[RMDB]
RNA sequence: GGGAACGACUCGAGUAGAGUCGAAAAGGACACAGCGCAGGCCACCUGCAGUGGGACUUGGAGAAUGAACAGUGUUUCAAACAGUGGCAACAGCAUGAACAGAGUGACAGAAGUGUCACUGUUCAGCUACCACGAGACUAUUCGUAGUCUCGUGGUAAAAAGAAACAACAACAACAAC
Reactivity to 2A3 in 0.01 (KOAc 150mM, MgCl2 10mM, bicine 150mM(pH8.5), 24C), signal-to-noise 3, nucleotides 027 to 126: g030g000a010c010a000c020a050g100c000g000c110a030g070g000c000c000a020c020c040u030g040c020a030g000u000g000g030g040a040c020u030u100g050g060a090g040a070a150u100g010a060a010c040a100g140u000g030u160u110u070c040a070a100a070c030a060g010u030g050g000c020a050a040c030a050g060c100a210u050g000a010a010c020a010g110a050g240u040g020a020c000a010g110a180a060g240u030g020u030c000a000c020u000g020u000u000c010a010g030c010
Reactivity to DMS in 0.01 (KOAc 150mM, MgCl2 10mM, bicine 150mM(pH8.5), 24C), signal-to-noise 4, nucleotides 027 to 126: g000g010a200c050a050c050a090g000c110g010c040a040g010g010c040c020a050c050c050u010g020c080a080g020u010g010g010g030a090c050u010u000g000g000a110g020a090a080u000g020a040a080c060a110g020u010g020u000u010u000c020a090a050a100c120a080g000u000g000g000c050a080a080c180a030g020c020a110u010g000a010a010c020a040g000a090g010u000g000a020c000a030g000a110a090g000u000g020u000c000a030c000u000g000u000u000c010a030g000c040
Record summary: Structure probing data (2A3 and DMS) for a 177-nucleotide construct. For DMS, 4,590 sequencing reads were counted. The RNA was probed in 150 mM KOAc, 10 mM MgCl2 and 150 mM bicine (pH 8.5) at 24 C. Values are in units of 0.01, from 0 to 300, in steps of 10. For 2A3 the reverse transcriptase was SuperScript II with manganese.